An RNA of 177 nucleotides, treated with DMS and 2A3 and read out base by base. Conditions: 150 mM KOAc, 10 mM MgCl2 and 150 mM bicine (pH 8.5), 24 C. The 2A3 profile rests on 31,711 reads.
RNA sequence: GGGAACGACUCGAGUAGAGUCGAAAACGGGGUACGAGGGAUUGUAAAGGCUCACUGGGUCUACAGUCCCGUACCCAUAGACUACAUUUGUACUAGACCCAGUGAGCCUUUAGUACGAUGUGGUCAAGGAACACGUAGAUUUCGAUCUAUGUGUUCCAAAAGAAACAACAACAACAAC
Reactivity to DMS in 0.01 (KOAc 150mM, MgCl2 10mM, bicine 150mM(pH8.5), 24C), signal-to-noise 4, nucleotides 027 to 126: c090g000g010g000g010u010a010c010g010a120g010g010g000a030u010u000g000u000a000a010a000g000g000c000u000c010a030c010u000g010g000g000u010c010u010a010c040a020g000u000c010c010c030g020u000a010c010c020c010a040u020a030g000a030c030u010a020c020a020u010u010u060g030u000a010c050u000a010g000a020c000c000c000a000g000u020g000a000g000c010c000u000u000u000a010g010u010a020c020g000a040u010g010u000g000g000u000c040a140a160
Reactivity to 2A3 in 0.01 (KOAc 150mM, MgCl2 10mM, bicine 150mM(pH8.5), 24C), signal-to-noise 8, nucleotides 027 to 126: c020g010g000g000g000u020a010c020g050a300g020g060g000a000u000u010g010u010a010a010a010g000g000c000u020c120a090c030u020g000g000g000u000c000u010a000c000a000g000u010c000c010c000g000u000a000c000c000c000a000u090a010g000a000c000u010a000c010a010u040u070u300g000u000a000c000u000a000g000a000c000c000c000a030g030u090g100a000g000c000c000u000u000u000a000g000u000a000c000g000a010u010g000u000g000g000u000c020a020a050

The DMS profile rests on 36,961 reads. The data come from the RNA Mapping Database (RMDB), library OK1LIB.